[RMDB]
RNA sequence: GGGAACGACUCGAGUAGAGUCGAAAAAGCUGAUGGACUUGAUGAACACCAACAACCUCGACCUGUUCCGCCAGUACGCUCGCCGCGUGAGUGGCGAAGUGUCCCUUGCCAAGUACGGCAUCAUGGGCGAGCAGGGCAUGAAGGAACUGCGCAUGGCUACUGCGUACAGGUUCGCCUGUACGCAGUAAAAAGAAACAACAACAACAAC
Reactivity to 2A3 in 0.01 (KOAc 150mM, MgCl2 10mM, bicine 150mM(pH8.5), 24C), signal-to-noise 1, nucleotides 027 to 156: a040g050c030u040g030a090u040g000g050a070c030u100u020g100a010u010g010a090a030c020a040c050c000a010a100c030a040a080c070c060u100c050g160a090c010c020u010g010u040u000c070c030g000c020c000a040g000u040a040c050g000c020u010c000g000c000c000g000c000g100u100g100a170g010u040g000g030c020g030a100a020g020u060g010u000c040c000c000u010u000g020c000c030a190a200g060u130a150c190g090g020c020a000u100c030a020u200g040g000g000c010g010a030g000c000a010g010g000g000c010a060u040g060a050a050g020g000a030a040c010u100g050c020g000c040a030u040g010g020c020